Chemical mapping of a 177-nucleotide RNA with DMS and 2A3.
The reactions ran in a buffer of 150 mM KOAc, 10 mM MgCl2 and 150 mM bicine (pH 8.5), at 24 C.
It was measured as part of the RMDB library OK1LIB.
2A3 adducts were read by reverse transcription with SuperScript II with manganese.
[RMDB]
RNA sequence: GGGAACGACUCGAGUAGAGUCGAAAAGACAAUAGACCCCCAGGUGGAGAAGAAGAUGGGACAAGUGUUACUCAUAGCAGUAGCCAUCUCCAGUGCUGUGCUGCUGCGGACCGCCUGGGGAUGGGGGGUAGUGGACCAAUUUCGAUUGGUCCACUACAAAAGAAACAACAACAACAAC
Reactivity to DMS in 0.01 (KOAc 150mM, MgCl2 10mM, bicine 150mM(pH8.5), 24C), signal-to-noise 4, nucleotides 027 to 126: g010a120c160a080a050u040a130g010a190c090c000c000c010c000a000g000g040u040g030g000a120g010a180a170g020a130a100g000a040u010g000g010g020a090c090a160a120g000u060g000u010u020a110c000u010c020a020u000a080g000c000a010g000u000a010g030c010c010a010u000c020u000c160c220a080g010u030g020c190u020g000u030g030c010u000g000c010u000g010c010g020g000a200c010c000g010c000c010u000g030g000g010g000a020u010g000g000g000g010g030
Reactivity to 2A3 in 0.01 (KOAc 150mM, MgCl2 10mM, bicine 150mM(pH8.5), 24C), signal-to-noise 5, nucleotides 027 to 126: g020a000c050a030a100u100a210g060a110c020c010c000c000c000a000g000g000u000g010g060a120g030a100a040g050a070a010g110a100u040g020g000g030a020c070a080a190g100u130g100u300u140a120c010u030c040a010u080a050g000c020a000g010u010a000g000c000c010a040u030c060u040c080c090a090g080u110g160c040u040g070u230g030c010u000g000c000u000g000c050g020g030a010c000c030g000c000c000u000g020g000g000g010a010u020g010g000g000g000g000

About this RNA
DMS adducts were read by reverse transcription with MarathonRT.